[RMDB]
RNA sequence: GGGAACGACUCGAGUAGAGUCGAAAAGAAACGCUACGGCUCACCGAGCGACAACCGCGGUGGCCGGGACACCCAAUCCGUGGACCGUCCCAGGUACCCGGAAACGGGGAGCUCACCAGGCCUAGAAGGGUAUAGUUUACUUCGGUAAACUAUACCCAAAAGAAACAACAACAACAAC
Reactivity to 2A3 in 0.01 (KOAc 150mM, MgCl2 10mM, bicine 150mM(pH8.5), 24C), signal-to-noise 3, nucleotides 027 to 126: g030a000a090a010c050g020c070u100a030c040g000g000c010u030c030a070c010c030g010a000g010c010g050a070c070a040a030c020c040g030c040g110g030u060g000g020c040c020g010g000g000a020c020a050c000c000c020a020a070u040c030c020g040u300g030g010a030c110c030g080u160c040c010c000a020g030g020u140a270c010c000c000g000g070a040a050a010c070g000g000g000g010a030g010c010u040c000a150c010c000a050g000g000c000c020u050a080g040a140a060
Reactivity to DMS in 0.01 (KOAc 150mM, MgCl2 10mM, bicine 150mM(pH8.5), 24C), signal-to-noise 2, nucleotides 027 to 126: g000a150a090a080c160g030c120u050a080c030g000g050c000u040c040a010c000c050g010a050g020c030g020a140c250a110a070c150c040g070c150g000g020u040g000g000c020c000g000g010g020a090c030a120c070c000c000a050a280u000c000c030g030u020g020g000a050c040c000g010u020c140c030c080a230g000g010u010a080c000c050c010g000g020a020a000a150c150g000g000g040g020a060g000c050u040c040a090c060c000a110g070g000c040c010u000a100g000a210a170
This 177-nucleotide RNA was probed chemically with 2A3 and DMS. For 2A3, 2,272 sequencing reads were counted. It was measured as part of the RMDB library OK1LIB. The reactions ran in a buffer of 150 mM KOAc, 10 mM MgCl2 and 150 mM bicine (pH 8.5), at 24 C. For 2A3 the reverse transcriptase was SuperScript II with manganese. For DMS the reverse transcriptase was MarathonRT.